[RMDB]
Chemical mapping of a 177-nucleotide RNA with DMS and 2A3.
Source: RMDB library OK1LIB, as collected in RNAgym.
The RNA was probed in 150 mM KOAc, 10 mM MgCl2 and 150 mM bicine (pH 8.5) at 24 C.
Reactivities are rounded to 0.1 and cut off at 0 and 3.
For DMS, 19,922 sequencing reads were counted.

RNA sequence: GGGAACGACUCGAGUAGAGUCGAAAACGUCGAUCUGCCGGCGCAGCUGGGCGAUCUCGGCACUGUAGUCCAGCUGGAGGUCACGGCCCAGAGCGUCUUUCACUGGCAUGGCCAGCAUGUCGCUCAGGCCUAAUACUGAUUUCGAUCAGUAUUAGGCAAAAGAAACAACAACAACAAC
Reactivity to DMS in 0.01 (KOAc 150mM, MgCl2 10mM, bicine 150mM(pH8.5), 24C), signal-to-noise 6, nucleotides 027 to 126: c000g000u000c110g000a010u000c010u010g010c030c050g010g000c100g020c010a020g000c000u000g000g010g000c010g010a120u040c100u020c090g000g010c060a100c110u020g020u020a210g000u000c020c010a010g000c000u010g010g010a030g010g020u000c000a020c030g000g000c010c000c020a120g000a020g000c000g010u000c020u010u010u020c180a240c030u010g000g000c000a160u040g010g020c000c010a010g000c190a110u010g000u010c010g000c000u000c000a110g000
Reactivity to 2A3 in 0.01 (KOAc 150mM, MgCl2 10mM, bicine 150mM(pH8.5), 24C), signal-to-noise 9, nucleotides 027 to 126: c020g020u040c090g010a040u020c020u130g120c050c020g070g030c100g010c040a010g010c000u010g000g000g000c040g050a130u070c090u060c090g100g020c080a050c150u110g050u110a020g020u010c020c000a010g000c010u020g020g010a020g000g010u040c020a010c060g050g000c010c000c010a010g000a000g000c010g010u010c000u020u140u080c060a040c020u010g010g010c080a300u210g180g000c000c000a000g010c050a040u150g010u020c000g000c000u010c020a020g100